[RMDB]
An RNA of 170 nucleotides, treated with 2A3 and DMS and read out base by base.
RNA sequence: GGGAACGACUCGAGUAGAGUCGAAAAUGCCCUUUAUUGUUGGGUGCACCCUGGGACCCAGUAAUACCCGGGGGGAGGCGGGGUAAACCCAUACUAUGGGAACUGCUGGGUUCCUCGGAUGUCGAUCAAGCUCACCUGUUCGCAGGUGAGAAAAGAAACAACAACAACAAC
Reactivity to 2A3 in 0.01 (KOAc 150mM, MgCl2 10mM, bicine 150mM(pH8.5), 24C), signal-to-noise 4, nucleotides 027 to 129: u160g040c000c000c000u040u130u050a140u020u050g080u010u040g020g000g020u080g020c000a070c000c010c000u020g010g000g000a010c000c010c000a000g000u010a020a060u060a080c000c000c000g040g000g000g000g050g000a020g000g030c040g000g030g000g010u040a070a070a040c000c010c000a020u090a140c140u120a120u160g000g000g030a070a010c020u030g000c000u000g000g000g000u040u020c000c000u020c000g000g020a110u020g020u070c030g010a060u040c010a010a000g030
Reactivity to DMS in 0.01 (KOAc 150mM, MgCl2 10mM, bicine 150mM(pH8.5), 24C), signal-to-noise 4, nucleotides 027 to 129: u050g040c040c000c000u060u030u060a120u010u040g000u040u010g020g010g050u030g060c120a090c020c010c050u020g010g020g040a000c000c000c000a040g010u020a060a080u030a150c020c020c010g010g010g000g020g010g010a040g000g040c060g000g020g060g030u050a040a140a190c040c030c020a000u060a090c130u000a130u050g040g030g000a120a090c090u080g000c040u000g000g000g000u010u040c020c010u030c230g000g020a130u030g000u030c080g040a110u000c120a100a090g000

The RNA was probed in 150 mM KOAc, 10 mM MgCl2 and 150 mM bicine (pH 8.5) at 24 C. For DMS, 13,543 sequencing reads were counted. For 2A3 the reverse transcriptase was SuperScript II with manganese.